[RMDB]
RNA sequence: GGGAACGACUCGAGUAGAGUCGAAAACGCGGCCCACAUGGUGCCCGAAACGCUGACCGUACGCCCGAACAUGACGGUGUCGCAGGCCGUCGCCAGCGUGCGGGAACGCGCCUCGGGCCUGCGCAGCCCAAACAUUAACUUUCGAGUUAAUGUUUGGAAAAGAAACAACAACAACAAC
Reactivity to DMS in 0.01 (KOAc 150mM, MgCl2 10mM, bicine 150mM(pH8.5), 24C), signal-to-noise 8, nucleotides 027 to 126: c070g000c030g000g010c020c000c020a160c220a080u040g000g040u020g010c010c000c000g020a020a050a060c020g030c000u000g000a250c070c010g020u010a030c040g010c020c070c180g010a140a120c160a130u020g010a030c060g000g010u010g010u020c110g020c140a080g000g000c020c010g010u010c020g010c150c110a120g000c000g030u000g000c000g000g000g020a140a150c210g000c030g000c070c040u010c050g000g000g030c010c010u000g010c040g010c160a160g010c130
Reactivity to 2A3 in 0.01 (KOAc 150mM, MgCl2 10mM, bicine 150mM(pH8.5), 24C), signal-to-noise 9, nucleotides 027 to 126: c070g020c030g030g040c010c080c010a060c040a120u220g070g010u180g030c000c000c000g020a040a050a000c020g000c010u030g060a070c010c010g010u030a000c000g020c020c050c050g080a150a070c080a140u300g020a010c020g010g020u050g080u200c100g010c150a070g170g000c010c010g000u010c010g020c040c020a010g000c000g000u010g000c000g000g000g020a020a020c070g000c000g000c020c000u020c000g000g000g000c000c000u020g000c020g000c010a080g020c000